[RMDB]
RNA sequence: GGGAACGACUCGAGUAGAGUCGAAAAACAUGCUGGCCAACCCAACCCCACGAUCCUCCAUCGGCAUGAUCAUGAUGUGUUCUCAAAUAACAGGCCAGUAAAUCACCAUGCUCGUGCUGGUAAAGGCAACUUAUGCCCAAGUUCGCUUGGGCAUAAACAGACUCUCGGGAUUCGUCCCGAGAGUCUGAAAAGAAACAACAACAACAAC
Reactivity to 2A3 in 0.01 (KOAc 150mM, MgCl2 10mM, bicine 150mM(pH8.5), 24C), signal-to-noise 2, nucleotides 027 to 156: a000c090a020u090g000c000u000g020g030c020c000a060a050c140c000c000a000a090c080c050c030c010a050c200g110a160u040c010c020u060c040c050a040u050c000g010g000c000a000u010g000a000u000c000a000u020g060a030u100g020u000g000u100u010c090u050c020a140a080a040u160a090a100c050a060g000g020c010c000a000g010u000a010a020a030u110c000a000c030c000a000u020g000c000u000c020g020u000g000c000u000g000g020u020a150a100a000g020g010c000a000a030c040u010u010a000u000g010c000c000c000a010a000g000u050u080c110g000c140u000u010g040g000g000c000a000u000a000a000a000

The record gives the reactivity of an RNA of 207 nucleotides to 2A3. The 2A3 profile rests on 761 reads. The reactions ran in a buffer of 150 mM KOAc, 10 mM MgCl2 and 150 mM bicine (pH 8.5), at 24 C.